[RMDB]
RNA sequence: GGGAACGACUCGAGUAGAGUCGAAAAGAUCGUCCUUCUUCAUUAUCAGGUCGCCCAUUUUUGAGACCUCGUUGCCUACGAUCUCUGCAAUUUUUCCGGGCCCUUUAAAGAUUCCGCGCAGCCGCGAUUCCGGUUGGAAUGAUCCCUUGCGGACAUGUAGUAGCUCUAAUUUCGAUUAGAGCUACUAAAAAGAAACAACAACAACAAC
Reactivity to DMS in 0.01 (KOAc 150mM, MgCl2 10mM, bicine 150mM(pH8.5), 24C), signal-to-noise 2, nucleotides 027 to 156: g000a090u010c060g010u000c030c030u000u000c030u000u000c050a070u000u000a130u000c050a050g020g040u010c070g000c030c090c060a190u010u000u000u010u000g000a150g010a030c040c020u000c070g030u000u000g010c040c030u000a110c030g000a050u000c020u000c020u000g020c020a060a070u000u000u000u000u000c070c030g010g030g000c030c010c040u000u030u000a080a070a160g000a150u000u000c010c010g000c020g030c060a070g010c060c030g010c060g000a180u010u000c030c010g010g040u010u000g010g010a060a060u010g000a220u000c000c010c020u020u010g030c030g020g020a130c110a090u010g010
Reactivity to 2A3 in 0.01 (KOAc 150mM, MgCl2 10mM, bicine 150mM(pH8.5), 24C), signal-to-noise 3, nucleotides 027 to 156: g010a070u050c050g060u080c030c010u080u080c030u130u040c020a110u080u280a090u150c070a020g010g030u060c110g080c010c020c020a060u040u100u030u080u130g160a050g010a060c010c040u020c040g030u050u130g100c020c050u070a050c020g030a050u060c020u000c030u060g040c120a160a140u000u220u060u100u040c090c010g040g070g000c030c000c020u190u120u150a130a180a040g040a090u180u030c000c000g000c010g000c020a010g000c010c020g090c070g110a060u190u070c080c030g060g000u040u040g040g040a060a050u050g020a070u030c070c000c010u030u060g040c040g020g010a010c000a030u170g010